An RNA of 207 nucleotides, treated with DMS and 2A3 and read out base by base.
For 2A3 the reverse transcriptase was SuperScript II with manganese.

RNA sequence: GGGAACGACUCGAGUAGAGUCGAAAACUCAGUCGCAGAGCGCCGCUGGAUCGACUGGCCUCCGGUGGAAAACGAAGAUUCGUCUUCAAUUUCUGUAACCGGACCGGUCUCCUUCGGCCGCCGAGCGCUGGUUGCCGCUAGUCGAGCGGACUUCCGUUCACUAUAUUGUCUUCGGACAAUAUAGUGAAAAAGAAACAACAACAACAAC
Reactivity to DMS in 0.01 (KOAc 150mM, MgCl2 10mM, bicine 150mM(pH8.5), 24C), signal-to-noise 1, nucleotides 027 to 156: c060u000c020a050g000u000c050g050c030a080g000a300g000c020g070c010c000g050c050u000g000g000a060u010c100g010a020c020u010g030g020c000c030u000c020c010g000g000u000g020g010a020a020a020a140c300g000a050a040g010a090u010u010c300g010u000c000u010u010c020a100a300u000u010u000c020u000g010u030a070a210c030c000g000g020a020c000c010g050g000u010c010u000c010c010u010u000c010g030g020c030c070g000c010c020g000a300g060c030g000c020u000g020g000u000u000g000c060c010g050c000u000a110g030u000c080g020a120g020c020g040g000a070c110u010u000c000c030g000u000
Reactivity to 2A3 in 0.01 (KOAc 150mM, MgCl2 10mM, bicine 150mM(pH8.5), 24C), signal-to-noise 6, nucleotides 027 to 156: c100u110c060a030g300u300c050g000c000a000g000a010g010c010g000c000c000g010c010u010g020g000a080u170c190g000a000c010u000g000g000c000c010u000c000c000g000g000u000g000g010a010a000a010a020c050g010a000a010g000a010u040u150c230g070u010c100u000u000c000a150a250u010u000u000c000u010g030u030a010a000c000c000g000g000a000c000c000g010g020u000c000u000c000c000u000u010c010g020g010c040c020g000c000c000g010a010g010c000g000c000u000g000g010u010u040g020c010c000g000c020u040a070g160u230c100g110a010g000c000g020g040a070c040u040u010c010c020g010u010
Values cover nucleotides 27 to 156. The DMS profile rests on 2,382 reads. For DMS the reverse transcriptase was MarathonRT. Conditions: 150 mM KOAc, 10 mM MgCl2 and 150 mM bicine (pH 8.5), 24 C.